An RNA of 177 nucleotides, treated with 2A3 and DMS and read out base by base.
[RMDB]
RNA sequence: GGGAACGACUCGAGUAGAGUCGAAAAGAUGCAGGCAACCUUCUCGUGCAGCAUCCUGGACCCUGCACUCGCCUAUGUCGACGCUGUGCCCCUGCCCUUCCUGCAGAUGACUCAGCUCACUGGGGCGGCUAAAAAUGAAAUUCGUUUCAUUUUUAGCAAAAGAAACAACAACAACAAC
Reactivity to 2A3 in 0.01 (KOAc 150mM, MgCl2 10mM, bicine 150mM(pH8.5), 24C), signal-to-noise 6, nucleotides 027 to 126: g020a010u050g000c030a030g210g000c030a110a120c030c010u160u110c130u100c120g050u040g000c010a010g000c010a030u030c000c010u050g100g040a090c010c000c000u040g030c050a070c030u070c030g020c000c010u080a070u140g060u050c110g000a030c110g000c030u010g020u030g030c000c000c010c010u010g010c010c020c000u090u110c010c020u040g000c000a010g010a100u060g050a110c000u000c040a000g010c000u010c010a020c020u040g080g000g000g000c000g000
Reactivity to DMS in 0.01 (KOAc 150mM, MgCl2 10mM, bicine 150mM(pH8.5), 24C), signal-to-noise 9, nucleotides 027 to 126: g010a050u010g010c020a100g010g010c050a060a090c080c070u000u000c080u010c110g010u000g010c030a090g000c040a050u000c030c030u000g010g000a150c060c040c010u000g010c080a090c120u010c040g020c020c020u000a100u010g000u000c090g020a040c150g010c030u000g010u000g000c020c060c120c020u000g000c000c060c060u000u000c060c040u000g000c020a030g010a070u010g000a060c020u000c040a070g000c020u000c030a040c040u000g020g010g010g010c060g020
Notes: For DMS, 31,809 sequencing reads were counted. As a SHAPE reagent, 2A3 marks flexible, mostly unpaired nucleotides at the ribose 2'-OH. The reactions ran in a buffer of 150 mM KOAc, 10 mM MgCl2 and 150 mM bicine (pH 8.5), at 24 C.